An RNA of 177 nucleotides, treated with DMS and 2A3 and read out base by base. Conditions: 150 mM KOAc, 10 mM MgCl2 and 150 mM bicine (pH 8.5), 24 C. The data come from the RNA Mapping Database (RMDB), library OK1LIB. DMS adducts were read by reverse transcription with MarathonRT.

RNA sequence: GGGAACGACUCGAGUAGAGUCGAAAAUGCUUCCACUUCAUCUAAAUGAUGGGUAGUUAAUAUAAUUAAACAUUUAGAUUUCAUGAUGUUAAGUAGUUGGUGGAUGUCAUGUCUAGAUUUUAAAUCAAAUACAGACGAGAUUCGUCUCGUCUGUAUUAAAAGAAACAACAACAACAAC
Reactivity to DMS in 0.01 (KOAc 150mM, MgCl2 10mM, bicine 150mM(pH8.5), 24C), signal-to-noise 3, nucleotides 027 to 126: u040g010c090u000u000c030c010a030c050u000u000c040a030u000c040u000a070a060a040u010g000a050u010g000g000g000u010a040g000u010u000a060a080u040a120u000a110a060u010u000a040a070a070c020a040u000u020u030a060g000a100u010u020u030c130a040u010g010a030u000g010u000u000a050a060g020u010a060g000u010u000g000g010u000g020g010a020u010g010u020c050a030u010g030u030c050u020a030g000a050u000u010u010u020a080a050a070u000c080a090
Reactivity to 2A3 in 0.01 (KOAc 150mM, MgCl2 10mM, bicine 150mM(pH8.5), 24C), signal-to-noise 3, nucleotides 027 to 126: u090g020c020u140u020c030c040a100c020u120u110c020a000u000c020u070a070a100a000u110g080a060u040g140g030g100u090a060g020u030u030a120a060u150a110u080a100a070u060u050a080a060a000c010a000u000u000u020a030g020a030u090u150u260c100a050u100g090a040u120g030u070u120a130a140g030u100a060g000u160u260g030g000u020g020g010a000u000g020u030c000a010u020g010u050c030u020a010g000a130u000u130u180u230a040a260a060u170c110a070